[RMDB]
RNA sequence: GGGAACGACUCGAGUAGAGUCGAAAAUUAUUGAGCGUAGAUGUCUCUGUCAGGAUACGAGUAAGUGACUCUCGUGUACUACUGGCGAAUGAGACAGAGACAUUAUAUGCUCGUGCCAGUCAAUAAACUACCCCUAUACGUUCGCGUAUAGGGGUAGAAAAGAAACAACAACAACAAC
Reactivity to 2A3 in 0.01 (KOAc 150mM, MgCl2 10mM, bicine 150mM(pH8.5), 24C), signal-to-noise 3, nucleotides 027 to 126: u190u110a000u050u150g000a000g000c010g000u010a020g010a050u020g000u010c000u000c000u000g000u000c030a020g040g060a020u020a070c000g010a000g010u110a090a170g070u090g300a060c030u000c010u020c060g040u030g010u030a080c010u000a010c000u060g160g000c070g040a110a090u180g030a030g010a080c000a000g000a010g000a000c000a000u010u020a170u000a000u190g000c000u000c010g000u030g010c000c000a070g090u160c060a020a140u100a170a130a010
Reactivity to DMS in 0.01 (KOAc 150mM, MgCl2 10mM, bicine 150mM(pH8.5), 24C), signal-to-noise 3, nucleotides 027 to 126: u000u030a080u000u000g000a010g030c010g060u010a010g000a020u000g020u000c000u000c000u000g010u010c000a060g010g010a080u000a020c000g010a030g000u010a040a130g020u000g000a160c170u000c090u010c080g010u000g010u010a040c040u010a090c140u010g000g000c050g000a080a040u000g000a210g000a020c010a020g000a020g000a030c000a010u000u000a050u000a020u000g010c010u000c010g000u010g010c050c030a130g000u010c150a060a090u010a070a090a170
The data come from the RNA Mapping Database (RMDB), library M2PK90. This 177-nucleotide RNA was probed chemically with 2A3 and DMS. The 2A3 profile rests on 2,278 reads. The reactions ran in a buffer of 150 mM KOAc, 10 mM MgCl2 and 150 mM bicine (pH 8.5), at 24 C. The DMS profile rests on 2,991 reads.